[RMDB]
RNA sequence: GGGAACGACUCGAGUAGAGUCGAAAAGAUAUGGAACAUACCGGGAGCUAGUCGGAAACGACAUAGCAUCGAUCGGUUUGUUCCUAAGUCAAAUCGACUUUAAUCAGUUCGCUGAUUAAAGUCGAAAGGUUAUAGAGCAGUUCGCUGCUCUAUAACCAAAAGAAACAACAACAACAAC
Reactivity to 2A3 in 0.01 (KOAc 150mM, MgCl2 10mM, bicine 150mM(pH8.5), 24C), signal-to-noise 3, nucleotides 027 to 126: g030a020u060a040u130g000g000a010a000c000a010u030a010c000c010g040g030g000a010g010c000u010a010g000u000c010g020g070a090a020a030c020g040a010c070a300u030a010g000c010a220u260c050g110a120u070c010g000g000u010u010u030g010u010u000c000c000u000a090a010g050u040c030a030a030a120u040c010g010a000c000u000u000u000a000a000u010c000a000g020u080u070c220g010c170u000g000a010u000u020a010a000a000g010u000c000g000a010a000a000
Reactivity to DMS in 0.01 (KOAc 150mM, MgCl2 10mM, bicine 150mM(pH8.5), 24C), signal-to-noise 2, nucleotides 027 to 126: g010a040u000a300u000g000g000a000a000c010a020u000a020c000c000g000g000g000a060g020c000u000a020g000u000c000g020g000a080a070a220c000g010a010c000a080u000a010g010c000a220u000c120g020a070u010c020g010g010u000u000u000g020u010u010c000c000u000a020a080g000u000c020a050a110a110u000c000g010a030c000u000u000u000a010a020u000c000a020g010u000u000c260g020c000u000g000a020u000u000a000a000a010g030u000c000g000a010a030a060